RNA sequence: GGGAACGACUCGAGUAGAGUCGAAAAUGGGAUACCAGUAAGCGAAAAAUGAUACAGGACGAAAAAAACAUAAUUCGAGAUUUUUCAGGAUGGAUUUUUUUAGGUAUCUAUCAAAACUAUUCUGAUGCAACGUAGAGCACGUUCGCGUGCUCUACAAGUUAGAUGAUGUCUUCGGACAUCAUCUAACAAAAGAAACAACAACAACAAC
Reactivity to DMS in 0.01 (KOAc 150mM, MgCl2 10mM, bicine 150mM(pH8.5), 24C), signal-to-noise 1, nucleotides 027 to 156: u010g030g000g010a130u000a140c020c060a120g020u000a070a100g050c020g000a010a020a110a190a110u000g000a230u010a030c060a120g010g010a100c080g000a030a000a100a030a030a040a130c050a080u000a120a140u000u000c040g000a150g000a120u010u010u060u010u010c010a040g010g000a020u010g010g010a010u000u000u000u000u000u000u050a040g020g010u000a080u000c020u010a060u000c050a020a040a020a040c010u000a060u000u010c030u000g000a050u010g010c120a030a100c150g000u010a010g010a010g000c000a010c000g030u000u030c270g050c010g120u000g000c000u010c010u010a010c000a030a100
Reactivity to 2A3 in 0.01 (KOAc 150mM, MgCl2 10mM, bicine 150mM(pH8.5), 24C), signal-to-noise 3, nucleotides 027 to 156: u050g010g010g010a030u040a050c000c000a020g090u130a060a010g040c040g060a050a070a010a060a050u120g030a070u120a120c060a050g080g050a030c040g050a050a040a010a000a010a060a000c060a050u160a110a090u090u080c060g000a040g040a240u080u160u070u110u020c000a010g010g000a010u000g030g010a040u000u010u010u020u000u040u080a020g030g020u100a080u090c010u010a010u040c000a000a020a000a040c020u030a030u040u000c000u030g020a050u080g020c040a050a060c090g000u000a000g000a000g010c000a000c000g010u010u020c070g010c000g040u020g010c000u000c000u000a000c000a000a000